[RMDB]
RNA sequence: GGGAACGACUCGAGUAGAGUCGAAAAGAUAUGGACCACGGGAGGUCGAAGGGAGUCGGAAACGACUCUGUUGACGACCGAGGAUCGUGAAGUCCUAAGUCAAAACGGAUUUGUUCGCAAAUCCGAACUAUGCGUAGCUCUUCGGAGCUACGCAUAGAAAAGAAACAACAACAACAAC
Reactivity to DMS in 0.01 (KOAc 150mM, MgCl2 10mM, bicine 150mM(pH8.5), 24C), signal-to-noise 3, nucleotides 027 to 126: g020a050u000a300u010g000g000a040c010c000a010c000g010g000g020a070g000g000u010c010g030a280a110g010g010g000a020g020u010c000g000g010a130a070a270c000g000a000c000u000c000u020g010u010u000g020a300c040g000a010c020c000g010a100g000g010a010u010c010g030u000g010a120a100g010u000c010c000u000a020a100g010u010c080a070a040a090a300c030g000g000a020u000u010u000g000u010u030c160g010c000a000a000a000u000c010c010g000a070a080
Reactivity to 2A3 in 0.01 (KOAc 150mM, MgCl2 10mM, bicine 150mM(pH8.5), 24C), signal-to-noise 2, nucleotides 027 to 126: g000a000u050a070u190g000g000a000c000c010a000c030g010g000g000a030g000g030u050c040g000a020a040g190g010g000a020g010u010c020g010g000a080a040a020c040g010a010c000u030c010u020g020u040u120g100a080c030g010a000c000c000g040a140g040g030a010u030c020g010u040g100a150a060g010u000c000c000u020a130a060g050u030c040a010a040a120a130c010g030g000a000u040u010u010g020u060u130c300g000c160a010a000a000u000c000c000g000a040a020